Source: RMDB library M2RFPK, as collected in RNAgym. Chemical mapping of a 207-nucleotide RNA with DMS and 2A3. For 2A3, 10,664 sequencing reads were counted. DMS adducts were read by reverse transcription with MarathonRT. The DMS profile rests on 7,864 reads.
[RMDB]
RNA sequence: GGGAACGACUCGAGUAGAGUCGAAAACCUUUUAUCUGACCAAUAACAGAAUGCACCACAGCGUAAAAUCAUCUGAUUGGGUGAGUUGGUCGCACCGCCAUUUGACGAACGAACGCCAAGCCUAAGCACUACGAGUAUGUGUUCGCACAUACUCGAACUAUCCCUAUAGUUUCGACUAUAGGGAUAGAAAAGAAACAACAACAACAAC
Reactivity to DMS in 0.01 (KOAc 150mM, MgCl2 10mM, bicine 150mM(pH8.5), 24C), signal-to-noise 3, nucleotides 027 to 156: c020c010u010u000u000u010a110u010c030u020g030a100c040c030a140a070u000a120a200c010a120g000a070a120u000g010c030a070c010c020a070c040a110g000c060g030u010a050a050a100a090u000c030a070u010c040u000g020a190u010u010g000g020g020u000g000a150g010u000u000g020g020u000c030g000c030a100c040c010g020c020c000a160u000u000u000g000a060c030g000a090a120c090g000a080a070c040g020c020c020a070a160g000c020c030u000a070a110g030c060a130c040u000a170c000g010a030g020u000a000u000g050u010g010u010u000c300g010c030a020c010a020u000a000c000u010c000g000a030a090
Reactivity to 2A3 in 0.01 (KOAc 150mM, MgCl2 10mM, bicine 150mM(pH8.5), 24C), signal-to-noise 9, nucleotides 027 to 156: c010c000u030u010u030u050a080u020c030u020g030a020c010c020a040a050u050a070a030c010a030g070a140a090u110g040c040a030c060c010a050c060a050g030c030g070u110a040a060a060a080u070c030a030u010c040u060g070a180u090u180g070g010g000u020g020a060g010u030u060g020g010u030c010g000c010a020c010c020g060c030c010a070u060u060u120g050a020c030g020a120a020c020g020a050a020c020g020c010c010a050a030g010c000c010u080a080a010g040c060a040c130u150a050c070g000a000g000u000a000u000g020u000g010u030u060c130g010c060a000c000a000u000a000c000u000c000g010a000a000